Structure probing data (2A3 and DMS) for a 177-nucleotide construct. The 2A3 profile rests on 8,062 reads.
RNA sequence: GGGAACGACUCGAGUAGAGUCGAAAACUUGCGCUUGUACAGUUCGGUCUAGCGAUGAGGUUGGCUCAUCAAGCAAUAUGAACUCAGGCUUGAGCACCAACGCCCGCGCAAUCGCGAUACGCUGCCACUUUUAAAAUCCAUUCGUGGAUUUUAAAAGAAAAGAAACAACAACAACAAC
Reactivity to 2A3 in 0.01 (KOAc 150mM, MgCl2 10mM, bicine 150mM(pH8.5), 24C), signal-to-noise 6, nucleotides 027 to 126: c000u020u060g010c030g000c030u070u090g050u140a070c040a130g020u070u090c020g050g060u020c070u100a030g010c030g080a110u050g030a030g130g040u120u080g070g000c010u030c070a090u020c020a060a010g000c000a060a120u170a150u300g100a110a060c050u020c170a040g030g010c000u010u030g010a000g000c030a020c010c000a020a020c020g070c030c020c000g000c020g010c010a050a120u080c020g000c000g050a060u040a130c060g010c060u040g020c030c010a050
Reactivity to DMS in 0.01 (KOAc 150mM, MgCl2 10mM, bicine 150mM(pH8.5), 24C), signal-to-noise 8, nucleotides 027 to 126: c070u000u000g000c070g020c030u000u000g010u000a080c150a070g000u000u010c070g020g010u010c080u000a120g010c030g010a060u000g010a050g000g010u010u010g010g010c050u010c080a170u000c010a020a050g010c020a090a090u010a120u010g010a080a090c180u010c160a100g010g000c020u010u000g000a030g010c300a100c040c010a020a060c070g000c040c020c040g010c050g010c050a100a060u010c060g010c040g010a100u010a040c080g000c050u000g020c050c070a190